[RMDB]
RNA sequence: GGGAACGACUCGAGUAGAGUCGAAAACUCAUAAAACCGUUCUCAGUUCGGAUUGUAGGCUGCAACUCGCCUACAUGAAGCUGGAAUCGCUAGUAAUCGCGGAUCAGCAUGCCGCGGUGAAUACGUUGGACCACUGGAUUUUCGAAUCCAGUGGUCCAAAAGAAACAACAACAACAAC
Reactivity to 2A3 in 0.01 (KOAc 150mM, MgCl2 10mM, bicine 150mM(pH8.5), 24C), signal-to-noise 2, nucleotides 027 to 126: c030u040c020a060u210a000a080a000a020c040c040g000u000u070c160u000c020a090g040u250u150c000g090g000a010u000u000g020u060a000g000g000c020u060g000c100a210a060c000u070c170g000c000c000u000a000c000a000u000g000a000a000g000c000u030g000g010a000a000u090c000g030c120u010a020g000u030a000a000u000c000g020c020g040g000a050u190c010a100g190c110a170u300g040c020c000g000c000g000g000u010g000a000a000u300a160c170g000u000u030

Record summary: Chemical mapping of a 177-nucleotide RNA with 2A3. It was measured as part of the RMDB library RFM100. The RNA was probed in 150 mM KOAc, 10 mM MgCl2 and 150 mM bicine (pH 8.5) at 24 C. Reactivities are given for positions 27 through 126.